[RMDB]
RNA sequence: GGGAACGACUCGAGUAGAGUCGAAAACAAAGAAGAUAUUCGAUCCGCGAAAGCGCCAUUUGGUGAGAACAUAGCCGUUCAGCGCGCCAACGAUAGUCGAAAUGGCCACAGCCGGAACGACCAUCAAUAUAAUUAGGCCUUUCGAGGCCUAAUUAUAAAAAGAAACAACAACAACAAC
Reactivity to 2A3 in 0.01 (KOAc 150mM, MgCl2 10mM, bicine 150mM(pH8.5), 24C), signal-to-noise 1, nucleotides 027 to 126: c050a010a140a020g150a080a010g010a060u050a070u130u050c010g000a030u030c000c000g000c000g060a060a050a040g080c130g030c030c010a060u030u070u040g000g010u030g010a120g030a010a000c050a040u200a060g070c020c010g060u070u050c020a090g060c040g000c010g050c040c010a040a030c020g070a070u090a040g130u080c080g090a000a000a070u010g000g000c000c050a020c080a070g020c070c010g000g010a010a010c010g000a000c010c000a030u030c010a060a090
Reactivity to DMS in 0.01 (KOAc 150mM, MgCl2 10mM, bicine 150mM(pH8.5), 24C), signal-to-noise 2, nucleotides 027 to 126: c040a050a140a060g010a220a030g000a020u000a090u010u010c000g000a050u010c010c000g020c070g010a030a090a120g020c140g020c010c020a060u000u000u010g030g030u030g020a150g000a040a040c050a030u010a100g020c190c060g030u000u020c030a160g010c010g010c080g000c010c030a030a090c080g000a130u000a100g050u020c060g010a070a030a080u000g010g010c000c080a050c290a140g010c050c050g020g020a060a140c010g040a010c120c080a040u000c030a130a170

Description: The record gives the reactivity of an RNA of 177 nucleotides to 2A3 and DMS. DMS adducts were read by reverse transcription with MarathonRT. For DMS, 985 sequencing reads were counted. The reactions ran in a buffer of 150 mM KOAc, 10 mM MgCl2 and 150 mM bicine (pH 8.5), at 24 C.